[RMDB]
RNA sequence: GGGAACGACUCGAGUAGAGUCGAAAAAUACAUACUGACACCGGUUGCUCAACAGGCUGUGUGGGACAAUAGAAUCACAAGGCUGUCAAUUUGAGCUUGACGGCUGCAAACCGAAUGGAGUGAAAUCGUAACCGGACUCACUUCGGUGAGUCCGGAAGAGUAUUUACACGUUCGCGUGUAAAUACUCAAAAGAAACAACAACAACAAC
Reactivity to DMS in 0.01 (KOAc 150mM, MgCl2 10mM, bicine 150mM(pH8.5), 24C), signal-to-noise 1, nucleotides 027 to 156: a100u000a090c030a150u000a150c080u020g020a110c060a080c000c020g020g010u000u000g000c030u040c050a080a100c030a110g010g000c000u040g020u010g010u000g020g000g020a130c080a060a140u010a090g040a100a090u000c050a020c040a070a190g040g020c010u000g030u010c010a000a060u000u010u020g010a180g060c150u000u020g010a080c000g020g000c010u000g000c040a060a100a090c040c060g010a070a200u000g010g000a050g020u020g000a040a060a050u000c100g030u010a170a150c000c000g010g010a020c030u000c010a020c000u000u000c260g000g050u000g000a020g010u020c010c000g000g000a010a000
Reactivity to 2A3 in 0.01 (KOAc 150mM, MgCl2 10mM, bicine 150mM(pH8.5), 24C), signal-to-noise 2, nucleotides 027 to 156: a000u110a000c040a020u110a020c020u110g090a040c020a000c050c060g080g000u040u040g010c030u060c040a060a060c030a060g060g020c020u020g030u020g020u070g140g000g070a010c040a050a060u140a190g130a050a040u070c000a020c010a090a090g030g040c020u020g000u020c020a000a020u110u140u150g020a000g010c000u010u060g000a020c000g000g030c060u020g030c000a020a060a150c040c020g080a090a080u090g070g000a040g030u130g080a160a040a120u100c060g020u000a060a010c000c000g010g000a000c020u000c000a000c000u010u030c040g070g010u000g000a000g000u020c000c020g000g000a000a020
The record gives the reactivity of an RNA of 207 nucleotides to DMS and 2A3. The reactions ran in a buffer of 150 mM KOAc, 10 mM MgCl2 and 150 mM bicine (pH 8.5), at 24 C. High 2A3 reactivity points to a flexible backbone, as in loops and unpaired stretches. The data come from the RNA Mapping Database (RMDB), library M2RFPK.